[RMDB]
RNA sequence: GGGAACGACUCGAGUAGAGUCGAAAAGAUAUGGACUUGUCUCUAGCGUGAAGCACGCGAAGUAACAUUGUAUCGGAAACGAUACAAUGUUAUGGAGCGUGAACUACUUUCGGGCAAGUCCUAAGUCGAUGAAAGGACAGUUCGCUGUCCUUUCAUCAAAAGAAACAACAACAACAAC
Reactivity to 2A3 in 0.01 (KOAc 150mM, MgCl2 10mM, bicine 150mM(pH8.5), 24C), signal-to-noise 2, nucleotides 027 to 126: g040a050u170a130u290g000g020a000c000u030u030g040u090c000u000c080u300a080g090c050g050u100g150a300a010g070c020a000c010g000c000g040a030a030g010u000a000a000c000a010u000u000g000u020a010u000c010g050g040a140a070a010c000g000a000u000a000c010a000a000u020g000u000u000a010u010g010g000a000g020c000g000u030g020a010a000c000u040a020c010u040u070u180c090g010g010g010c000a000a000g020u020c000c000u000a010a010g010u020c100
Reactivity to DMS in 0.01 (KOAc 150mM, MgCl2 10mM, bicine 150mM(pH8.5), 24C), signal-to-noise 2, nucleotides 027 to 126: g010a080u020a300u000g000g000a000c000u020u030g010u000c010u000c090u010a050g010c160g010u010g010a250a170g020c010a020c000g010c000g010a300a300g010u000a010a010c000a000u000u000g000u000a000u000c000g010g000a130a190a210c010g000a030u010a000c000a000a020u010g000u000u000a000u000g010g000a300g000c000g000u000g000a000a050c050u000a090c000u000u000u020c270g000g010g000c000a050a020g000u000c000c000u030a020a030g000u050c100
Notes
Chemical mapping of a 177-nucleotide RNA with 2A3 and DMS. It was measured as part of the RMDB library TTRINS. The RNA was probed in 150 mM KOAc, 10 mM MgCl2 and 150 mM bicine (pH 8.5) at 24 C. DMS adducts were read by reverse transcription with MarathonRT.